[RMDB]
RNA sequence: GGGAACGACUCGAGUAGAGUCGAAAAGAGACAUUGUGGAACAGAGGCCCGUCACGGAGUACCUCAAAACCAUGGCAGCUGGGACUAAUGUCAAAGUGAUAAUGCUGAGUUACUCAGACAUGGCACAUCGGUGAUGAAUGUUCGCAUUCAUCACCGAAAAAGAAACAACAACAACAAC
Reactivity to DMS in 0.01 (KOAc 150mM, MgCl2 10mM, bicine 150mM(pH8.5), 24C), signal-to-noise 2, nucleotides 027 to 126: g010a150g010a030c040a020u000u010g000u000g000g000a140a060c110a110g010a030g000g000c090c020c220g000u000c050a170c110g050g010a100g010u000a130c050c010u010c050a030a080a130a090c180c040a070u000g000g000c040a110g000c040u010g000g010g000a090c060u000a010a050u030g010u000c000a060a130a090g020u000g000a060u010a040a030u000g010c040u010g000a030g020u000u010a050c020u000c010a020g000a030c010a030u000g000g030c000a030c060a140
Reactivity to 2A3 in 0.01 (KOAc 150mM, MgCl2 10mM, bicine 150mM(pH8.5), 24C), signal-to-noise 1, nucleotides 027 to 126: g180a010g010a010c020a040u090u110g060u030g060g050a090a010c050a000g040a030g090g000c050c100c000g180u270c080a090c140g020g000a000g030u070a040c000c050u000c000a010a030a020a020c010c030a040u020g040g070c060a060g030c040u060g000g040g040a010c000u050a050a060u050g010u020c050a110a030a030g110u060g050a060u030a190a010u070g000c000u010g000a010g050u190u070a120c010u010c040a010g020a080c020a020u000g070g000c040a000c010a080